[RMDB]
RNA sequence: GGGAACGACUCGAGUAGAGUCGAAAAAGGAAAAGCCAAGCAUGGGUGUAAUACAGAAUUGAUCAUUGCCAUGGUGCUUAUGUCUUCCUCAAAGUAGCCCUGUGUCAAAUCUAGCACCUUUGGCUCAUAAACUUGGUUGACAACCAGCAACAUCCAACAUGCGUCAACCAUUCGUGGUUGACGCAUGAAAAGAAACAACAACAACAAC
Reactivity to 2A3 in 0.01 (KOAc 150mM, MgCl2 10mM, bicine 150mM(pH8.5), 24C), signal-to-noise 1, nucleotides 027 to 156: a000g110g010a000a130a000a000g010c020c020a020a010g050c000a020u180g020g080g020u010g010u150a100a140u160a090c070a100g110a190a080u130u140g020a030u150c110a180u030u080g020c030c030a020u070g000g030u080g000c000u190u000a080u240g030u010c040u060u110c000c010u030c020a110a100a010g050u030a060g000c070c010c000u030g030u000g000u000c010a020a030a030u010c050u060a020g000c000a000c000c000u020u000u000g020g000c010u010c080a060u080a050a080a030c030u040u040g000g000u000u020g020a040c020a090a040c090c060a000g080c030a020a000c020a060u200c060c000a030a030
The record gives the reactivity of an RNA of 207 nucleotides to 2A3. For 2A3 the reverse transcriptase was SuperScript II with manganese. The reactions ran in a buffer of 150 mM KOAc, 10 mM MgCl2 and 150 mM bicine (pH 8.5), at 24 C. For 2A3, 453 sequencing reads were counted.